[RMDB]
RNA sequence: GGGAACGACUCGAGUAGAGUCGAAAACAGAUAGUAAAGAUUUUACACCUUUUGUACAAUACAAUCUCUAUCUCAUCUACUUAGCUCUGCCAUUGUUGCAUAAAAGCAGCUGUAGAUGAUACACAAAUGGGUGAGGCUGUAUUCCAAUGAAACGUUAGCUUUAUCUAACAUUCGUGUUAGAUAAAGCAAAAGAAACAACAACAACAAC
Reactivity to DMS in 0.01 (KOAc 150mM, MgCl2 10mM, bicine 150mM(pH8.5), 24C), signal-to-noise 3, nucleotides 027 to 156: c060a070g020a130u010a100g010u000a090a040a140g000a200u010u000u000u000a090c060a060c060c030u000u000u000u000g010u000a130c090a100a120u000a090c060a060a090u010c040u000c020u000a080u010c050u010c000a030u000c010u000a040c020u010u010a090g020c060u000c070u000g020c030c030a270u010u000g000u010u000g000c060a110u000a040a060a150a080g000c060a050g040c060u010g000u000a010g010a050u000g010a080u010a080c080a200c080a050a070a060u010g000g040g030u000g010a140g040g000c020u010g000u010a060u000u010c050c030a080a080u000g010a090a090a140c080g000u010u010a240
Reactivity to 2A3 in 0.01 (KOAc 150mM, MgCl2 10mM, bicine 150mM(pH8.5), 24C), signal-to-noise 8, nucleotides 027 to 156: c020a010g070a060u210a050g070u180a090a200a050g050a140u100u110u100u200a060c050a070c030c000u060u070u060u110g050u040a060c070a100a080u070a100c040a060a130u060c070u020c020u100a080u080c020u010c030a010u000c010u010a000c020u090u170a010g000c020u010c020u060g020c030c020a190u160u240g090u180u180g010c040a030u140a200a100a030a040g060c070a020g010c020u020g000u000a000g000a000u010g000a000u100a010c080a000c010a020a080a060u160g040g020g000u030g020a050g070g000c010u010g010u030a050u070u020c030c000a070a100u130g070a110a080a020c110g080u160u190a020
The data come from the RNA Mapping Database (RMDB), library OK3TST. Structure probing data (DMS and 2A3) for a 207-nucleotide construct. 2A3 adducts were read by reverse transcription with SuperScript II with manganese. For 2A3, 5,143 sequencing reads were counted. The RNA was probed in 150 mM KOAc, 10 mM MgCl2 and 150 mM bicine (pH 8.5) at 24 C.